The record gives the reactivity of an RNA of 207 nucleotides to 2A3. Conditions: 150 mM KOAc, 10 mM MgCl2 and 150 mM bicine (pH 8.5), 24 C. It was measured as part of the RMDB library OK3TST.
RNA sequence: GGGAACGACUCGAGUAGAGUCGAAAACACCGACCACGUUAUAAAUACCGAAAUCUUCGACACCUAAACUAUUUAAAACCACCCUUGAUGUAUAUAGUGUGACACCAAGGGUUAGGAGCAUUCGGAAAUAAAGAAAUAAGGUAUUUUUAACGAUUCGCCUACGCAUGGGAUUCGUCCCAUGCGUAGGAAAAGAAACAACAACAACAAC
Reactivity to 2A3 in 0.01 (KOAc 150mM, MgCl2 10mM, bicine 150mM(pH8.5), 24C), signal-to-noise 1, nucleotides 027 to 156: c070a040c000c020g000a020c120c000a040c000g000u000u000a020u000a010a010a010u010a000c010c010g030a120a040a070u090c080u030u080c000g050a020c000a030c050c020u040a100a140a100c050u040a200u290u230u190a090a210a060a040c030c020a020c000c000c000u010u010g010a050u000g020u000a070u000a050u020a300g250u070g090u200g250a010c000a020c010c000a000a000g020g010g020u000u050a020g010g010a070g060c060a040u040u050c060g020g030a030a100a070u080a000a030a000g070a000a020a000u090a130a020g000g000u000a000u000u000u000u040u030a000a000c000g000a000u130u150c010g010